[RMDB]
RNA sequence: GGGAACGACUCGAGUAGAGUCGAAAACACAUGCCAUCAUAUCGGUUAACAACUCUUAACUCUGAUGGCUUUCGAGUUAUGUGGUGCAUUGAAGCUCUCCCUUCAAUUCAACGUACCGUUCCGUCAAAGCGGAAGUUACUUUCGAGUAACUUCCGCUAAAAGAAACAACAACAACAAC
Reactivity to DMS in 0.01 (KOAc 150mM, MgCl2 10mM, bicine 150mM(pH8.5), 24C), signal-to-noise 1, nucleotides 027 to 126: c160a040c210a030u020g010c030c010a030u000c000a110u040a110u000c250g010g000u000u000a010a010c160a160a150c150u010c210u000u000a000a000c000u000c130u010g000a000u000g000g000c030u000u000u010c100g000a050g000u010u010a020u000g010u010g030g010u000g010c010a020u000u000g010a030a030g010c050u000c050u010c130c060c010u000u010c150a090a020u000u000c000a030a050c060g010u000a010c030c010g040u000u000c000c000g040u010c100a030a090
Reactivity to 2A3 in 0.01 (KOAc 150mM, MgCl2 10mM, bicine 150mM(pH8.5), 24C), signal-to-noise 1, nucleotides 027 to 126: c100a000c010a090u140g000c040c020a020u000c010a010u050a080u300c080g050g050u000u000a040a020c080a060a160c180u050c030u120u010a000a010c010u010c030u060g010a010u010g020g000c000u000u030u000c000g010a000g000u130u000a050u190g040u180g020g060u090g020c010a020u010u050g000a000a010g000c040u010c010u020c130c010c070u000u040c000a030a070u000u040c020a070a020c030g030u050a050c040c000g000u070u030c020c020g080u070c110a140a090
The record gives the reactivity of an RNA of 177 nucleotides to DMS and 2A3. For 2A3, 968 sequencing reads were counted. For DMS the reverse transcriptase was MarathonRT.